[RMDB]
RNA sequence: GGGAACGACUCGAGUAGAGUCGAAAACACACAAUUUAACGUCUAUAGAAACAAGUACACACAUUUAUCCUAACAAAUGUAUCACACUGUCUGGAUCGCUAAAAAUAAUCAAUAACUACACACCUCAUACGGAGGAGGAAUUCGUUCCUCCUCCGUAAAAAGAAACAACAACAACAAC
Reactivity to DMS in 0.01 (KOAc 150mM, MgCl2 10mM, bicine 150mM(pH8.5), 24C), signal-to-noise 1, nucleotides 027 to 126: c080a190c120a030c070a010a070u000u000u000a150a150c090g050u000c070u000a120u000a190g030a100a070a150c130a080a070g000u000a010c110a030c010a030c010a040u000u000u000a080u000c050c030u030a040a050c120a020a020a020u000g010u010a160u000c090a050c070a130c070u010g030u000c050u030g000g000a030u000c040g040c050u010a030a040a050a000a010u010a060a070u000c170a030a010u010a120a100c080u000a040c040a070c070a090c000c050u010c120a170